[RMDB]
RNA sequence: GGGAACGACUCGAGUAGAGUCGAAAAGUGCACCCCCUUAGAGUUGUGAGCCCUUAAAAGGGACAGGAAUUGCUCACUCGGGGAGCUUGGCUCUUGAGACCGGAGUCUUGCCGAUGCCCCUGGCCUACCAAGCCUGUGAAUUCGUUCACAGGCUUGGAAAAGAAACAACAACAACAAC
Reactivity to DMS in 0.01 (KOAc 150mM, MgCl2 10mM, bicine 150mM(pH8.5), 24C), signal-to-noise 1, nucleotides 027 to 126: g000u010g010c110a140c050c000c000c010c050u020u000a160g040a060g050u000u010g000u000g000a150g010c020c050c020u000u010a080a090a150a100g010g000g010a070c080a030g000g030a110a110u010u000g020c000u000c030a080c140u010c110g000g020g010g060a050g010c020u010u010g010g030c020u000c020u010u000g000a160g010a060c080c030g010g000a040g000u000c030u000u000g010c010c020g010a060u000g010c030c040c000c100u000g000g000c020c020u030a180
An RNA of 177 nucleotides, treated with DMS and read out base by base.
The DMS profile rests on 806 reads.
Conditions: 150 mM KOAc, 10 mM MgCl2 and 150 mM bicine (pH 8.5), 24 C.